[RMDB]
RNA sequence: GGGAACGACUCGAGUAGAGUCGAAAACAAAAGUUUUGGUGGUCAAUGUAGAAAGGUGUUUAGUGGGGAUGGAAAAGAUUUCUACAGGCUGAGUGGAAAUGUCCUGUCCUAUACAUUCCAGGUACUUACGACGUUAUUGAUUUCCAAUCUGGAAUUGUGUCGAAAAGUGUUUCGACACUUUUCGACAAAAAGAAACAACAACAACAAC
Reactivity to 2A3 in 0.01 (KOAc 150mM, MgCl2 10mM, bicine 150mM(pH8.5), 24C), signal-to-noise 2, nucleotides 027 to 156: c020a010a110a010a040g020u040u110u150u060g030g000u040g000g010u080c000a090a050u100g020u070a060g130a070a050a060g060g010u010g080u050u140u070a080g000u060g050g010g010g000a020u030g030g000a040a030a020a030g090a030u000u060u050c030u060a020c020a000g000g000c060u060g030a020g010u050g000g070a060a050a050u040g050u070c000c010u030g030u040c000c010u080a110u020a110c010a020u010u030c000c000a010g000g020u080a080c060u070u010a040c100g110a020c040g080u100u070a180u070u170g060a100u040u070u040c020c040a040a050u010c070u040g020g030a000a010u070u200g080
Reactivity to DMS in 0.01 (KOAc 150mM, MgCl2 10mM, bicine 150mM(pH8.5), 24C), signal-to-noise 2, nucleotides 027 to 156: c030a060a110a090a110g010u020u000u000u010g010g030u000g010g000u000c040a090a050u000g020u000a070g030a050a110a060g000g000u010g030u000u000u000a080g010u000g010g010g010g020a130u010g000g000a060a120a080a130g000a080u010u010u000c020u010a070c030a060g030g030c050u010g000a150g010u000g000g010a070a050a040u020g000u000c030c020u010g030u000c020c000u010a160u000a080c080a110u000u000c050c040a030g000g010u010a060c040u000u010a090c050g040a140c060g040u020u000a070u000u000g000a150u000u000u000c000c020a070a150u000c010u000g000g010a050a040u000u010g010